[RMDB]
RNA sequence: GGGAACGACUCGAGUAGAGUCGAAAAGAAUUGGUAUGUAAGCUACUUCUUCCGGUAGCUGCGUCACACUUUAAGAGUGUGCAUACUGAGCCGAAGCUCAGCUUCGGUCCCCCAAGGGAAGUACAAAGCACUAAUGGGCAUUCGUGCCCAUUAGUGCAAAAGAAACAACAACAACAAC
Reactivity to 2A3 in 0.01 (KOAc 150mM, MgCl2 10mM, bicine 150mM(pH8.5), 24C), signal-to-noise 1, nucleotides 027 to 126: g060a030a150u050u120g050g000u000a000u000g000u000a030a000g000c010u000a000c000u000u110c000u020u000c000c000g000g050u010a000g000c000u000g000c010g000u000c000a000c000a000c000u170u090u240a210a190g230a000g180u010g000u000g000c000a000u000a000c000u000g010a000g000c000c000g000a000a000g020c030u090c300a010g000c000u010u000c000g030g030u000c050c000c000c000c000a070a070g020g000g000a000a000g000u070a000c160a000a110a000